[RMDB]
RNA sequence: GGGAACGACUCGAGUAGAGUCGAAAAUCCUAAGUCUCUGGUAGAAGACUGAUGACCUUUCUGCAAGUGAGCUCGGAAACGAGCUCAUGAUGACCAGAAAGCAAGGUCUUCAAACAGAGAUAUGGAAAACUGCUUCUACGUUCGCGUAGAAGCAGAACCAAGUGUACAUCUUCGGAUGUACACUUGGAAAAGAAACAACAACAACAAC
Reactivity to DMS in 0.01 (KOAc 150mM, MgCl2 10mM, bicine 150mM(pH8.5), 24C), signal-to-noise 1, nucleotides 027 to 156: u000c010c000u000a050a190g000u000c000u000c050u000g000g030u000a300g000a030a020g040a060c000u010g060a130u000g000a140c300c020u000u000u000c000u000g020c030a130a300g080u000g000a000g030c000u000c000g010g000a120a290a280c000g020a000g030c040u000c000a000u000g010a070u000g030a200c300c000a010g000a000a020a010g030c010a090a170g000g020u000c000u000u000c000a040a120a220c020a030g030a020g010a020u000a140u020g000g010a110a010a090a120c010u020g070c000u000u000c000u000a010c030g000u000u000c300g040c020g110u010a000g040a030a050g020c060a020g000a000a090
Reactivity to 2A3 in 0.01 (KOAc 150mM, MgCl2 10mM, bicine 150mM(pH8.5), 24C), signal-to-noise 3, nucleotides 027 to 156: u030c020c010u050a140a020g010u020c000u000c000u000g030g020u050a030g010a010a010g000a000c010u020g060a300u130g070a120c030c010u000u000u000c000u010g010c030a130a270g000u000g000a000g000c010u000c010g020g060a080a100a120c020g010a020g040c000u000c000a010u000g010a030u010g010a010c000c050a000g010a010a000a000g000c030a080a120g010g000u000c000u020u000c010a030a010a010c010a000g000a000g000a000u030a030u030g020g000a000a080a060a080c000u000g010c000u000u010c010u010a010c000g010u010u090c300g010c000g120u000a000g000a000a010g000c000a000g000a000a000